[RMDB]
RNA sequence: GGGAACGACUCGAGUAGAGUCGAAAAUCUUCUCUCUGCUAGAGACCAGAGGCCUUGAAGGAAGGAAGCCCAAGGGUCUCUCCUGGCUCUGCUUCCCCAUCACUGCCUCCACUUCCCCGCAUCCCUUUAUAACAAUCUGGUUCGCCAGAUUGUUAUAAAAAGAAACAACAACAACAAC
Reactivity to DMS in 0.01 (KOAc 150mM, MgCl2 10mM, bicine 150mM(pH8.5), 24C), signal-to-noise 1, nucleotides 027 to 126: u000c080u020u000c050u010c050u020c070u020g000c080u010a050g020a020g020a050c180c090a120g030a120g030g010c060c080u010u000g020a130a120g030g000a110a100g020g020a150a230g000c050c290c110a130a080g000g010g000u000c000u000c150u020c120c130u000g000g010c040u000c020u000g010c020u010u000c020c000c010c080a080u000c030a080c040u000g020c070c030u010c020c110a130c110u000u000c030c000c000c070g030c060a080u000c020c020c000u040u010

Structure probing data (DMS) for a 177-nucleotide construct. The reactions ran in a buffer of 150 mM KOAc, 10 mM MgCl2 and 150 mM bicine (pH 8.5), at 24 C. For DMS the reverse transcriptase was MarathonRT.